Chemical mapping of a 177-nucleotide RNA with 2A3. The data come from the RNA Mapping Database (RMDB), library OK1LIB. The reactions ran in a buffer of 150 mM KOAc, 10 mM MgCl2 and 150 mM bicine (pH 8.5), at 24 C. 2A3 adducts were read by reverse transcription with SuperScript II with manganese.
RNA sequence: GGGAACGACUCGAGUAGAGUCGAAAAACGAGAAAGUAAUGUUUUGACGGCUCCUUUUGUGCGCGCGUAUACUUCUUUAUGCAUUAACAGGACGAGGAGCACGCAAGCAAACACAAACAAAGCCACGGCCUCCGCAGUAGUUCGCUACUGCGGAGGCAAAAGAAACAACAACAACAAC
Reactivity to 2A3 in 0.01 (KOAc 150mM, MgCl2 10mM, bicine 150mM(pH8.5), 24C), signal-to-noise 1, nucleotides 027 to 126: a000c180g000a070g110a100a140a000g160u140a000a000u000g300u000u300u030u260g230a050c000g000g030c000u000c000c000u000u000u240u160g090u270g000c050g020c000g050c000g300u000a000u000a050c000u000u210c000u000u090u000a000u140g000c000a000u030u030a110a050c000a220g000g190a000c020g000a000g000g000a000g000c000a160c000g000c000a080a080g000c000a000a290a020c070a050c190a020a240a110c070a020a300a100g150c000c000a110c180g090